[RMDB]
RNA sequence: GGGAACGACUCGAGUAGAGUCGAAAAUAGCCAUCCGAGUGGACGUUGUCCUCCUUCGGAUGCCCAGGUCGGACCGCGGGGAGGUGGAGAUGCCAUGCCGACCCGAAGAGGAAAGAAGGACUCGGACAAAGGUAGAUGUUCGCAUCUACCAAAAGAAACAACAACAACAAC
Reactivity to DMS in 0.01 (KOAc 150mM, MgCl2 10mM, bicine 150mM(pH8.5), 24C), signal-to-noise 9, nucleotides 027 to 129: u020a070g030c190c010a040u020c000c020g000a060g010u050g020g010a010c100g020u020u040g000u030c060c000u000c010c010u030u010c030g000g000a030u010g010c000c000c060a100g000g020u010c050g000g020a070c030c080g010c030g000g000g000g000a070g020g020u000g000g000a060g000a090u050g030c070c060a060u050g020c010c000g040a120c020c040c070g020a040a040g030a060g000g020a010a040a040g040a030a010g000g000a050c060u020c000g050g000a070c110a000a070a070
Reactivity to 2A3 in 0.01 (KOAc 150mM, MgCl2 10mM, bicine 150mM(pH8.5), 24C), signal-to-noise 9, nucleotides 027 to 129: u110a000g070c020c000a000u000c000c000g010a020g070u100g010g030a050c220g100u110u220g030u070c000c010u020c010c050u060u030c000g000g000a000u010g000c000c000c000a020g020g040u030c010g010g020a050c000c010g020c030g030g010g010g000a030g000g020u060g020g010a100g010a050u160g070c040c010a060u110g020c010c010g020a050c000c000c010g010a020a010g030a020g020g020a060a020a010g020a010a020g020g000a010c010u010c040g000g000a020c020a030a070a020